[RMDB]
RNA sequence: GGGAACGACUCGAGUAGAGUCGAAAAGAUAUGGAUAGCGAAAUGUUGUCAGGAAGACUUUCGGAAACGAAAGCUUCCUUGGAUUUACUCGCGCUAUCCUAAGUCAAAAGUACAGUUCGCUGUACAACAGAGAGAAUACCUUCGGGUAUUCUCUCUGAAAAGAAACAACAACAACAAC
Reactivity to DMS in 0.01 (KOAc 150mM, MgCl2 10mM, bicine 150mM(pH8.5), 24C), signal-to-noise 2, nucleotides 027 to 126: g010a030u010a300u000g010g000a010u000a010g010c000g010a070a080a070u000g010u000u000g000u010c010a030g000g000a040a010g000a100c000u010u000u000c000g010g010a150a040a120c000g000a000a000a010g000c010u000u000c000c000u000u000g000g000a030u000u000u020a000c020u010c300g000c030g020c010u000a010u000c000c000u010a040a110g010u000c010a060a040a040a130g020u000a000c000a010g000u010u010c230g020c000u000g000u000a010c000a150a250
Reactivity to 2A3 in 0.01 (KOAc 150mM, MgCl2 10mM, bicine 150mM(pH8.5), 24C), signal-to-noise 1, nucleotides 027 to 126: g000a000u070a050u140g000g000a000u010a020g000c030g070a020a240a160u300g030u130u080g090u090c070a030g030g050a030a030g100a270c000u000u000u000c030g030g020a130a030a030c030g010a010a030a000g000c000u000u000c000c000u040u020g010g010a010u150u250u200a010c020u040c150g010c000g000c010u030a050u050c000c000u020a060a010g030u000c040a060a060a060a060g010u000a000c000a010g040u010u050c130g060c140u010g000u020a000c010a040a000